[RMDB]
RNA sequence: GGGAACGACUCGAGUAGAGUCGAAAAUGUUGCCCAGUCUGGUCUCAAACUCCUGAGCUGAAGUGGUCCACCCAUCUUGGCCUCCCAAAGUGCUGGGAUUCUAGGCGUGUGCCACUGUGCCUGGCCAGCAUUCCUGGGUUUUCGAACCCAGGAAUGCAAAAGAAACAACAACAACAAC
Reactivity to DMS in 0.01 (KOAc 150mM, MgCl2 10mM, bicine 150mM(pH8.5), 24C), signal-to-noise 1, nucleotides 027 to 126: u010g000u030u000g000c120c010c010a060g000u000c060u010g010g030u010c030u000c060a050a080a130c080u000c060c030u010g010a090g000c040u000g000a120a060g030u010g010g000u000c140c050a030c070c020c020a050u000c000u000u010g000g020c000c030u010c080c060c050a060a090a110g020u000g020c010u000g000g010g000a020u000u000c150u020a050g010g000c120g050u000g000u000g010c030c010a020c040u010g010u010g000c020c000u000g000g020c060c050a060